[RMDB]
About this RNA: Chemical mapping of a 177-nucleotide RNA with 2A3. The reactions ran in a buffer of 150 mM KOAc, 10 mM MgCl2 and 150 mM bicine (pH 8.5), at 24 C. Source: RMDB library RFM100, as collected in RNAgym. For 2A3, 622 sequencing reads were counted.

RNA sequence: GGGAACGACUCGAGUAGAGUCGAAAAGACGGCAAAAUCAUUAGGCUAAUAACGCUUAUUUGCAUUCUUAUCAUGCCGGCAGCUCGCCCUUAAAUACUGUUUCCACUACUGCUCCUUUACUGUAAGUUGUGUCAUGUCUGUUCGCAGACAUGACACAAAAAGAAACAACAACAACAAC
Reactivity to 2A3 in 0.01 (KOAc 150mM, MgCl2 10mM, bicine 150mM(pH8.5), 24C), signal-to-noise 2, nucleotides 027 to 126: g060a020c020g000g010c020a000a020a040a040u020c030a090u010u010a010g000g000c000u090a060a210u080a250a050c130g000c020u090u000a020u020u040u070g000c060a040u000u020c000u170u220a280u180c150a090u060g050c000c000g010g010c010a080g120c000u040c070g000c000c000c000u000u070a050a060a070u110a010c040u090g000u020u000u050c010c000a020c010u120a080c020u060g090c020u010c040c020u110u040u210a170c010u020g020u080a020a000g020u140